[RMDB]
RNA sequence: GGGAACGACUCGAGUAGAGUCGAAAAAUAAACAGCCUUAGCGUAUGUUUUCAUCCCAAGAAAUAAUACGCGAGGUAACAAUGACUGUACGCGUAUUAAUCAGUCAAUAACGCUAAGGUAAAAAAAAGUAAUGACUAUUGUUCGCAAUAGUCAUUACAAAAGAAACAACAACAACAAC
Reactivity to 2A3 in 0.01 (KOAc 150mM, MgCl2 10mM, bicine 150mM(pH8.5), 24C), signal-to-noise 3, nucleotides 027 to 126: a000u230a030a110a030c040a040g030c010c000u000u010a010g010c010g010u050a070u270g080u060u050u030u030c070a120u060c000c010c000a000a000g010a010a040a000u050a000a000u000a000c000g010c000g000a060g120g120u040a050a010c040a050a050u090g030a010c000u010g000u070a040c010g000c000g000u000a000u010u020a080a130u080c010a000g050u020c000a020a050u070a080a010c000g000c000u000a000a020g010g030u020a040a020a000a000a000a000a000a020
Reactivity to DMS in 0.01 (KOAc 150mM, MgCl2 10mM, bicine 150mM(pH8.5), 24C), signal-to-noise 2, nucleotides 027 to 126: a070u020a080a080a170c180a090g020c000c000u000u000a000g000c020g030u000a050u000g000u000u000u000u000c070a090u020c000c010c000a200a090g010a020a030a100u000a020a000u020a000c000g000c000g020a230g030g000u030a090a080c260a080a140u000g010a000c000u000g010u000a020c010g000c000g000u000a010u000u000a020a160u000c020a000g010u000c030a080a030u010a030a020c010g010c000u000a020a020g000g000u000a000a000a000a080a000a060a040a060